[RMDB]
RNA sequence: GGGAACGACUCGAGUAGAGUCGAAAACGGGGGUGUCUCCACCGCCUUGUGCUUGCAUCUGAUUGACUGCAGUUUUGAUUGUUUUCAUCGAAGAAGUGAAUUGAGUCACUCGUGUUGCAAACGUGUCGAGCGCAACACGGUUCGCCGUGUUGCGCUCAAAAGAAACAACAACAACAAC
Reactivity to 2A3 in 0.01 (KOAc 150mM, MgCl2 10mM, bicine 150mM(pH8.5), 24C), signal-to-noise 2, nucleotides 027 to 126: c000g000g050g000g000g000u000g050u120c010u000c090c050a050c030c030g170c050c010u030u230g090u100g010c000u000u060g000c000a030u000c020u030g090a060u070u090g000a000c000u020g040c130a090g060u000u070u090u110g190a230u000u080g070u050u100u170u000c030a080u090c020g000a040a010g030a060a000g120u180g120a070a000u160u010g000a020g000u000c000a000c050u000c050g050u020g030u090u020g060c050a020a000a000c050g140u090g090u200c070